[RMDB]
Source: RMDB library OK1LIB, as collected in RNAgym.
The record gives the reactivity of an RNA of 177 nucleotides to 2A3 and DMS.
RNA sequence: GGGAACGACUCGAGUAGAGUCGAAAACAUGAUUGCUCGGCAACUAUAAUGACGGGUAGGUCGGGUACGAACCGUCGUAUGGUUCGUGAGCUGAGAGGGCUAAAGGGAUUUUAGCUCGGCGAACUGACUGGUACUGAACUUUCGAGUUCAGUGCCAGAAAAGAAACAACAACAACAAC
Reactivity to 2A3 in 0.01 (KOAc 150mM, MgCl2 10mM, bicine 150mM(pH8.5), 24C), signal-to-noise 9, nucleotides 027 to 126: c030a040u150g010a130u090u170g000c000u010c010g090g000c040a010a010c020u020a000u040a080a200u110g010a000c000g010g000g050u080a040g040g120u080c100g050g000g130u140a040c010g030a140a030c000c000g010u020c010g010u020a020u030g010g000u030u010c060g050u070g040a010g000c010u010g020a040g020a020g020g010g000c010u020a010a000a010g150g110g090a160u010u000u000u000a000g000c000u000c000g040g020c060g020a060a040c030u050g080a020
Reactivity to DMS in 0.01 (KOAc 150mM, MgCl2 10mM, bicine 150mM(pH8.5), 24C), signal-to-noise 7, nucleotides 027 to 126: c080a120u040g000a100u020u030g000c000u010c010g010g010c100a040a030c040u020a020u010a050a050u020g010a010c010g000g010g010u030a110g000g030u000c050g010g010g000u020a060c010g010a070a190c010c000g000u010c060g000u000a020u000g010g010u000u000c060g020u020g000a030g000c020u020g010a120g000a150g000g000g010c000u000a000a010a030g010g040g010a150u020u000u000u000a010g010c000u000c010g000g020c110g020a070a130c080u010g000a280
Source information: Reactivities are given for positions 27 through 126. Conditions: 150 mM KOAc, 10 mM MgCl2 and 150 mM bicine (pH 8.5), 24 C.